[RMDB]
RNA sequence: GGGAACGACUCGAGUAGAGUCGAAAACACUACUUGGCACCGUCCCGGCUGGACGAUCGGGGAGUUGGAAGCGGCAAAGGCCGGACGGACGAUUUCGGUGGUGCUGCCGGCCCUCAACGAGGAAGCGGCUUGCAUACGUGUUCGCACGUAUGCAAGCAAAAGAAACAACAACAACAAC
Reactivity to 2A3 in 0.01 (KOAc 150mM, MgCl2 10mM, bicine 150mM(pH8.5), 24C), signal-to-noise 1, nucleotides 027 to 126: c030a000c010u040a000c010u070u160g090g000c030a010c080c000g010u060c050c030c010g030g020c030u050g060g080a040c030g050a080u090c040g040g000g060g000a060g080u110u090g180g000a090a030g020c020g010g020c030a050a070a090g070g000c000c010g020g000a030c000g010g060a040c030g050a050u070u110u100c050g000g000u080g000g030u080g060c000u000g010c000c000g060g000c000c000c000u050c030a130a070c030g000a030g060g000a050a020g080c040g030
Reactivity to DMS in 0.01 (KOAc 150mM, MgCl2 10mM, bicine 150mM(pH8.5), 24C), signal-to-noise 2, nucleotides 027 to 126: c060a100c080u000a000c050u000u000g050g010c120a110c040c000g010u000c080c020c050g000g020c030u010g020g000a260c150g020a050u000c060g000g000g000g000a130g010u020u000g000g000a160a100g010c040g040g020c060a050a130a110g020g000c040c000g020g000a070c090g000g010a120c110g000a080u000u020u000c060g040g000u000g010g010u000g010c110u000g000c060c020g000g040c030c010c010u000c010a060a080c090g010a040g000g030a100a100g010c060g010
Structure probing data (2A3 and DMS) for a 177-nucleotide construct. 2A3 adducts were read by reverse transcription with SuperScript II with manganese. For DMS the reverse transcriptase was MarathonRT. It was measured as part of the RMDB library OK2TST. Reactivities are given for positions 27 through 126. The RNA was probed in 150 mM KOAc, 10 mM MgCl2 and 150 mM bicine (pH 8.5) at 24 C.